[RMDB]
RNA sequence: GGGAACGACUCGAGUAGAGUCGAAAACAAGGCGCAGCGGUUGACACCGGAGGCGGCGAAGGCGCUCGCCGACAAGGUGAUCGAAACCCAGGUCGUCCCGAAGAAAAUCCCGGCUGUCGACGAUAUCCACAUAAGUUGUUUUCGAACAACUUAUGUGAAAAGAAACAACAACAACAAC
Reactivity to 2A3 in 0.01 (KOAc 150mM, MgCl2 10mM, bicine 150mM(pH8.5), 24C), signal-to-noise 6, nucleotides 027 to 126: c030a030a080g050g000c030g000c060a030g020c080g070g010u050u050g010a010c000a000c010c000g030g050a060g070g000c000g000g000c020g030a070a060g180g010c070g000c060u080c030g010c010c010g030a010c020a010a060g000g000u010g010a120u020c000g030a080a020a010c000c010c010a010g010g060u060c000g020u030c020c000c030g040a070a040g050a030a100a000a030u030c010c010c000g030g000c080u090g030u110c030g010a030c010g030a060u030a060u170c040
Reactivity to DMS in 0.01 (KOAc 150mM, MgCl2 10mM, bicine 150mM(pH8.5), 24C), signal-to-noise 9, nucleotides 027 to 126: c120a150a150g000g010c020g020c040a080g020c110g020g010u000u000g010a080c030a030c010c000g000g020a300g010g010c010g000g000c010g000a090a130g020g010c090g020c070u000c010g010c000c000g010a060c080a090a150g000g010u000g000a090u000c030g010a080a060a050c020c010c020a140g010g010u000c020g010u000c000c020c020g010a130a120g000a080a070a110a150u000c030c010c010g010g010c050u000g010u000c030g010a070c060g000a110u010a090u010c080